This 177-nucleotide RNA was probed chemically with 2A3 and DMS. The data come from the RNA Mapping Database (RMDB), library RFMREP. The RNA was probed in 150 mM KOAc, 10 mM MgCl2 and 150 mM bicine (pH 8.5) at 24 C. DMS (dimethyl sulfate) methylates the pairing face of unpaired adenines and cytosines. Reactivities are given for positions 27 through 126. The DMS profile rests on 8,136 reads.
RNA sequence: GGGAACGACUCGAGUAGAGUCGAAAAUUCCACAGCUAUGCUAAUCAGCUGUGGGUUAGUCAGGACCUAACGCGUACCCAAACGGGGAAGUGGAUGGACAACAGGUUAAUAUUCCUGUACUACCUUACAUAUUGAAGUUCUUCGGAACUUCAAUAUGAAAAGAAACAACAACAACAAC
Reactivity to 2A3 in 0.01 (KOAc 150mM, MgCl2 10mM, bicine 150mM(pH8.5), 24C), signal-to-noise 6, nucleotides 027 to 126: u090u030c000c000a000c010a010g000c000u060a020u250g040c040u160a150a120u130c070a030g020c000u000g000u000g000g000g000u000u010a020g020u030c030a010g020g050a060c000c010u030a130a040c020g000c010g070u100a030c010c010c000a150a270a120c160g000g010g000g010a050a010g010u030g050g020a090u110g030g020a020c030a060a020c020a070g050g060u110u080a120a020u090a160u170u040c000c010u020g020u050a040c020u040a030c000c010u030u050a050
Reactivity to DMS in 0.01 (KOAc 150mM, MgCl2 10mM, bicine 150mM(pH8.5), 24C), signal-to-noise 8, nucleotides 027 to 126: u010u010c000c000a010c000a020g010c000u000a070u010g020c210u020a110a120u010c150a030g000c010u000g020u010g000g000g000u000u000a030g000u000c060a040g000g000a080c120c010u000a070a200c040g010c030g000u000a300c010c000c000a050a110a150c270g010g000g010g010a130a210g010u000g000g010a180u000g000g000a070c100a060a030c110a080g010g010u010u000a050a090u000a200u010u000c000c000u000g000u010a040c060u000a060c050c010u000u000a140